The data come from the RNA Mapping Database (RMDB), library OK1LIB. Chemical mapping of a 177-nucleotide RNA with 2A3 and DMS. For 2A3, 974 sequencing reads were counted. DMS adducts were read by reverse transcription with MarathonRT.

RNA sequence: GGGAACGACUCGAGUAGAGUCGAAAAUAUUAUUUAUUGAUGAAAUCCAUAUGCUUGUAGGUGCUGGUAAAACAGAUGGUGCCAUGGAUGCAGGCAACAUGCUAAAACCAAUGUUAGCACGAGGAGAUCGGAGAAUACGUUUCGACGUAUUCUCCGAAAAAGAAACAACAACAACAAC
Reactivity to 2A3 in 0.01 (KOAc 150mM, MgCl2 10mM, bicine 150mM(pH8.5), 24C), signal-to-noise 1, nucleotides 027 to 126: u210a010u100u100a130u270u220u080a010u200u080g160a170u130g030a010a130a000u000c000c000a020u050a110u250g010c000u040u100g010u200a080g020g010u120g050c030u020g020g030u120a090a020a000a000c030a080g120a300u090g070g000u040g030c000c000a070u030g160g010a030u100g070c000a030g010g000c030a000a030c000a040u000g000c040u010a060a090a050a000c160c090a120a000u090g010u170u000a000g000c000a000c070g110a110g000g080a010g000a130
Reactivity to DMS in 0.01 (KOAc 150mM, MgCl2 10mM, bicine 150mM(pH8.5), 24C), signal-to-noise 2, nucleotides 027 to 126: u020a040u010u090a030u000u030u070a050u020u000g040a110u000g050a100a150a130u000c000c030a050u050a120u020g020c080u010u000g010u000a050g000g050u000g000c000u040g000g010u000a010a080a040a150c100a120g000a080u010g000g000u010g020c010c020a040u060g010g020a090u020g020c050a050g000g000c040a060a080c150a020u000g010c080u000a020a020a170a040c070c110a090a110u040g020u030u010a000g000c020a020c020g020a100g010g000a150g000a070

Conditions: 150 mM KOAc, 10 mM MgCl2 and 150 mM bicine (pH 8.5), 24 C.